[RMDB]
RNA sequence: GGGAACGACUCGAGUAGAGUCGAAAAGAUAUGGAAACAUGGAAGGGUAGACCCACCGAGGAUCUCGGAAACGAGGGAGGUGCUACCCGCAUGUUUCCUAAGUCAAACGAGGUCUUCGGACCUCGAACAAUUCACAUACCUUCGGGUAUGUGAAUUGAAAAGAAACAACAACAACAAC
Reactivity to 2A3 in 0.01 (KOAc 150mM, MgCl2 10mM, bicine 150mM(pH8.5), 24C), signal-to-noise 3, nucleotides 027 to 126: g010a010u080a050u160g000g000a000a000a010c000a000u030g050g180a300a200g180g010g000u020a020g130a200c140c080c050a010c010c010g040a300g010g000a010u000c010u000c030g030g000a100a060a020c000g010a020g000g020g000a030g000g000u030g030c000u000a000c010c000c010g000c000a000u010g000u000u000u000c000c010u000a040a020g040u030c020a000a050a120c000g000a000g000g000u000c010u030u060c160g120g000a000c000c000u010c000g010a000a010
Reactivity to DMS in 0.01 (KOAc 150mM, MgCl2 10mM, bicine 150mM(pH8.5), 24C), signal-to-noise 4, nucleotides 027 to 126: g000a040u010a300u010g000g000a010a000a010c000a000u000g020g010a140a110g030g010g020u000a000g010a200c180c270c040a040c010c000g000a080g010g000a040u000c010u000c000g000g000a040a070a170c020g010a040g000g000g000a040g010g010u000g000c010u000a010c000c000c010g010c010a010u000g000u000u000u000c000c010u000a010a030g000u000c020a080a080a230c030g020a010g000g010u000c000u000u010c160g030g000a010c000c000u000c000g000a040a160

The record gives the reactivity of an RNA of 177 nucleotides to 2A3 and DMS. Source: RMDB library TTRDEL, as collected in RNAgym. Reactivities are given for positions 27 through 126. The RNA was probed in 150 mM KOAc, 10 mM MgCl2 and 150 mM bicine (pH 8.5) at 24 C.